RNA sequence: GGGAACGACUCGAGUAGAGUCGAAAACAGGUUUUCUGCUCCUCUCUUGCUUGGCUUGUGCCAAUAGUGCAGCACCCUCUGAGCCAUCAGAGCAGCCGGGCAGUGCUUGGUACAGUUUCAGUAUAAUAUGGAACGAGCAGUCUUUAAACAUGGGCAGUCAGUCUGUACUAUUCGUAGUACAGACUGAAAAAGAAACAACAACAACAAC
Reactivity to DMS in 0.01 (KOAc 150mM, MgCl2 10mM, bicine 150mM(pH8.5), 24C), signal-to-noise 3, nucleotides 027 to 156: c040a110g010g010u000u000u000u010c020u000g030c010u010c010c060u020c030u000c050u000u010g030c030u010u010g020g030c030u000u020g040u000g020c020c020a070a090u010a090g030u010g040c060a100g000c040a120c060c100c030u000c010u000g020a040g030c120c150a130u010c030a050g020a070g020c080a040g040c060c030g000g020g020c010a080g030u000g020c060u000u000g010g030u000a060c040a140g010u010u000u000c060a130g010u010a110u000a100a150u010a110u000g010g010a050a060c040g000a090g030c040a070g010u000c050u010u000u000a090a080a100c110a070u000g010g010g020c050a120g000
Reactivity to 2A3 in 0.01 (KOAc 150mM, MgCl2 10mM, bicine 150mM(pH8.5), 24C), signal-to-noise 5, nucleotides 027 to 156: c020a020g090g000u040u040u050u060c010u020g010c020u040c000c020u020c020u010c060u110u140g020c010u030u060g020g020c030u090u130g020u020g040c000c000a110a180u170a120g160u220g040c030a030g010c020a110c040c000c000u020c020u020g030a040g070c080c030a150u020c010a040g010a010g020c030a000g010c040c000g020g000g000c010a020g000u010g050c020u040u050g040g030u050a070c030a080g000u000u020u030c020a020g030u070a050u070a300a150u220a140u140g010g000a030a020c020g010a020g000c010a020g000u060c070u060u190u110a100a100a030c060a070u120g020g040g010c000a020g040